[RMDB]
RNA sequence: GGGAACGACUCGAGUAGAGUCGAAAACUAACUUGUUUGGCCGGCUCGGUCCUCUAGCCGGUAGCCCUCGCAUGUUUGUCACAUUGCCCGGGCGAGGACAAUGCGCGUCGCUUCUGCACUUUGAGCCCCAGCAUAUACCUUUCGAGGUAUAUGCUGGAAAAGAAACAACAACAACAAC
Reactivity to DMS in 0.01 (KOAc 150mM, MgCl2 10mM, bicine 150mM(pH8.5), 24C), signal-to-noise 3, nucleotides 027 to 126: c020u010a140a100c220u010u000g000u000u030u030g000g000c000c050g000g010c000u010c090g040g000u000c020c000u010c040u000a040g010c000c010g020g020u010a110g010c010c000c000u010c300g010c040a030u000g010u010u000u000g000u030c110a100c050a050u010u020g000c030c050c130g010g000g030c110g000a010g000g000a030c050a110a060u030g000c020g020c040g020u010c000g020c040u000u010c010u010g010c020a040c030u000u020u000g000a100g010c040c010
Reactivity to 2A3 in 0.01 (KOAc 150mM, MgCl2 10mM, bicine 150mM(pH8.5), 24C), signal-to-noise 7, nucleotides 027 to 126: c010u060a050a050c030u130u140g080u130u070u130g100g010c010c010g000g030c020u040c060g060g040u090c000c040u050c020u030a030g020c000c000g000g000u000a010g020c000c000c000u020c020g050c030a030u060g040u070u090u100g170u110c030a020c030a080u060u160g040c000c020c010g010g020g030c010g020a040g010g010a010c020a010a090u150g020c040g010c010g030u020c000g010c010u030u060c010u060g030c020a030c060u060u050u100g070a070g010c000c000

Source: RMDB library OK1LIB, as collected in RNAgym. The record gives the reactivity of an RNA of 177 nucleotides to DMS and 2A3. The DMS profile rests on 6,141 reads. Reactivities are given for positions 27 through 126. High 2A3 reactivity points to a flexible backbone, as in loops and unpaired stretches. Conditions: 150 mM KOAc, 10 mM MgCl2 and 150 mM bicine (pH 8.5), 24 C.